RNA sequence: GGGAACGACUCGAGUAGAGUCGAAAAGGAUUCGUGUCAGUGCUGGAUCUAGCAGGCGCGUCUAUCGUAAACGGCCGGAUAGACGCGUGUGCACGCGGGCGGCCCGCGGCUGACGGGAUCCGGCCAACCAUUUUCUCACAUUCGUGUGAGGAAGUGGAAAAGAAACAACAACAACAAC
Reactivity to 2A3 in 0.01 (KOAc 150mM, MgCl2 10mM, bicine 150mM(pH8.5), 24C), signal-to-noise 9, nucleotides 027 to 126: g030g010a030u060u060c100g060u190g010u110c020a020g010u020g070c010u050g020g180a260u130c050u080a030g010c010a020g040g030c000g000c000g010u000c000u000a000u000c010g060u080a070a120a130c090g050g000c030c010g050g000a000u000a000g000a000c000g000c000g000u010g020u020g030c030a010c020g010c000g000g010g030c140g090g120c010c000c000g000c000g020g000c010u010g010a010c000g010g000g000a000u000c000c000g000g000c000c000a000a010
Reactivity to DMS in 0.01 (KOAc 150mM, MgCl2 10mM, bicine 150mM(pH8.5), 24C), signal-to-noise 7, nucleotides 027 to 126: g000g000a020u000u000c020g010u040g010u000c020a030g010u010g010c020u010g010g000a100u030c100u030a070g040c010a160g010g000c000g000c000g000u000c000u000a000u000c010g020u030a050a110a110c150g000g010c020c030g010g000a010u000a000g000a000c000g000c000g030u000g000u010g010c040a120c030g020c010g000g010g010c200g020g010c050c000c000g000c010g000g000c010u000g000a030c030g010g010g000a000u000c000c000g020g010c010c010a060a120